[RMDB]
RNA sequence: GGGAACGACUCGAGUAGAGUCGAAAAACGCUUCACAAUGUGCGGCAAAGAAACAUUGUUUAUGCAAAGGCACUUCGCAAUGUGUGCUCAAACAUUGAUUAUUCAAACACGCUUCACAAUGUGCGACAAAACUUCACGGUCUUCGGACCGUGAAGAACCACAUUCUAAACUUCGGUUUAGAAUGUGGAAAAGAAACAACAACAACAAC
Reactivity to 2A3 in 0.01 (KOAc 150mM, MgCl2 10mM, bicine 150mM(pH8.5), 24C), signal-to-noise 9, nucleotides 027 to 156: a000c020g010c020u050u030c010a000c000a010a020u010g000u000g000c010g040g010c070a090a100a080g080a020a050a010c010a010u010u010g070u030u070u100a090u100g050c060a070a060a080g070g000c020a010c020u130u120c140g020c150a100a110u120g040u010g020u010g040c020u040c080a070a090a010c010a010u020u050g070a070u130u250a090u140u160c070a010a090a020c070a020c110g030c020u060u080c040a010c010a090a110u070g010u020g040c020g070a040c090a010a110a030a030c000u000u000c000a010c000g000g000u000c000u020u030c080g090g000a000c000c000g000u000g000a000a000g000a000a000
Reactivity to DMS in 0.01 (KOAc 150mM, MgCl2 10mM, bicine 150mM(pH8.5), 24C), signal-to-noise 2, nucleotides 027 to 156: a040c060g000c020u000u000c010a050c000a030a030u010g060u010g010c040g010g030c030a120a100a080g030a070a020a030c000a020u000u000g020u000u000u000a070u020g040c030a070a160a130g020g000c010a020c020u000u000c160g040c110a150a060u000g010u010g030u000g000c010u000c070a070a180a050c060a050u010u010g010a100u000u010a090u000u010c120a090a080a080c050a080c030g000c040u000u010c150a030c050a040a050u010g040u010g000c030g010a070c070a040a080a120a110c010u000u000c000a020c010g000g010u000c010u010u010c300g050g000a030c000c000g010u000g010a000a000g000a040a100